[RMDB]
RNA sequence: GGGAACGACUCGAGUAGAGUCGAAAAAUGCCGUAAACGUUGGGCGCUAGGUGUGGGAUCCAUUCCACGGGUUCCGUGCCGUAGCUAACGCAUUAAGCGCCCCGCCUGGGGAGUACGGCCGCAAGGCGAUAGCGCCUUAGUUCGCUAAGGCGCUAUCAAAAGAAACAACAACAACAAC
Reactivity to DMS in 0.01 (KOAc 150mM, MgCl2 10mM, bicine 150mM(pH8.5), 24C), signal-to-noise 4, nucleotides 027 to 126: a070u000g010c010c000g010u000a040a070a090c110g000u000u000g000g000g000c020g030c020u000a060g010g030u000g010u000g010g010g000a010u010c010c010a290u000u000c140c210a120c220g000g000g010u000u010c000c000g020u000g000c000c010g000u000a140g020c000u000a100a130c300g010c030a080u010u010a060a300g010c000g000c000c000c010c020g000c040c130u000g020g000g000g000a110g000u000a030c050g000g000c000c240g020c180a070a060g010g030c170
Reactivity to 2A3 in 0.01 (KOAc 150mM, MgCl2 10mM, bicine 150mM(pH8.5), 24C), signal-to-noise 1, nucleotides 027 to 126: a020u040g040c020c000g030u030a000a080a090c060g010u040u060g010g000g020c000g000c010u010a030g000g000u020g000u010g000g020g000a010u020c000c000a070u270u090c060c020a060c040g000g000g010u010u030c010c010g000u010g010c020c000g020u010a010g000c020u080a030a020c020g010c000a000u080u130a090a000g010c000g000c020c010c030c040g030c000c040u130g000g060g000g010a040g070u040a010c020g020g000c000c040g100c070a060a040g060g000c050
Notes:
Chemical mapping of a 177-nucleotide RNA with DMS and 2A3. Reactivities are given for positions 27 through 126. The data come from the RNA Mapping Database (RMDB), library OK2TRN. The reactions ran in a buffer of 150 mM KOAc, 10 mM MgCl2 and 150 mM bicine (pH 8.5), at 24 C.